[RMDB]
RNA sequence: GGGAACGACUCGAGUAGAGUCGAAAAGCAUACACUUCGGUGUAUGCAAAAAGCGUACUACUCCAUACCAAGCACGGAACUACGUAUAUCCCAAAUAGGAUAUACGCCGUGAACUACUUGAUGGAGUAUCGCAAAAAGAGCGACUUCGGUCGCUCAAGCGUCCAAAUUGAUUCGUCAAUUUGGACGCAAAAGAAACAACAACAACAAC
Reactivity to 2A3 in 0.01 (KOAc 150mM, MgCl2 10mM, bicine 150mM(pH8.5), 24C), signal-to-noise 2, nucleotides 027 to 156: g000c000a000u000a030c000a000c010u040u150c260g050g070u000g010u010a000u000g000c000a020a010a020a020a020g010c010g000u040a120c140u000a030c000u020c000c000a010u020a180c040c040a030a000g010c000a000c000g010g030a130a020c150u300a030c300g020u010a000u000a000u000c000c010c010a180a300a110u180a020g020g000a000u010a000u000a000c040g060c010c000g030u000g000a020a000c020u140a040c000u160u010g000a030u000g000g020a000g000u000a020u010c000g000c020a020a020a020a020a020g000a000g000c000g000a000c000u040u040c150g120g000u020c010g000c000u010c000a000a000